Chemical mapping of a 177-nucleotide RNA with 2A3 and DMS. The DMS profile rests on 945 reads. The reactions ran in a buffer of 150 mM KOAc, 10 mM MgCl2 and 150 mM bicine (pH 8.5), at 24 C. Source: RMDB library OK2TRN, as collected in RNAgym.

[RMDB]
RNA sequence: GGGAACGACUCGAGUAGAGUCGAAAAAUGCUAGGUACAUCGUGUCAUGCUCGUACCACAUGGAUCGCCAUGUGCUAGCAUGCGCUAGCGACUAGGUACGCUAGGCGCACUGAUGACUACUAGGUACAGACAAUGGGUUGUUCGCAACCCAUUGUCUAAAAGAAACAACAACAACAAC
Reactivity to 2A3 in 0.01 (KOAc 150mM, MgCl2 10mM, bicine 150mM(pH8.5), 24C), signal-to-noise 2, nucleotides 027 to 126: a000u130g040c020u030a020g180g000u120a020c000a000u010c040g020u010g090u150c050a070u230g000c010u040c080g010u050a020c000c100a030c010a010u050g100g020a180u250c130g160c230c010a030u020g040u060g000c000u000a000g000c010a060u220g030c090g000c050u000a000g000c000g020a060c070u180a020g060g070u080a030c010g010c150u040a030g130g070c020g010c030a010c060u190g000a010u030g030a110c030u000a000c010u030a090g000g060u040a060c030
Reactivity to DMS in 0.01 (KOAc 150mM, MgCl2 10mM, bicine 150mM(pH8.5), 24C), signal-to-noise 1, nucleotides 027 to 126: a050u020g000c020u000a020g000g050u000a000c000a020u000c100g000u000g050u010c030a080u010g000c090u000c060g000u000a070c120c000a120c020a040u000g000g020a200u000c300g030c080c030a030u000g010u000g000c030u000a030g020c030a140u000g020c220g010c000u000a000g000c000g010a080c040u000a080g020g010u010a000c010g000c170u000a010g000g020c130g000c020a040c090u000g010a010u000g000a080c120u000a100c020u000a060g000g020u000a130c190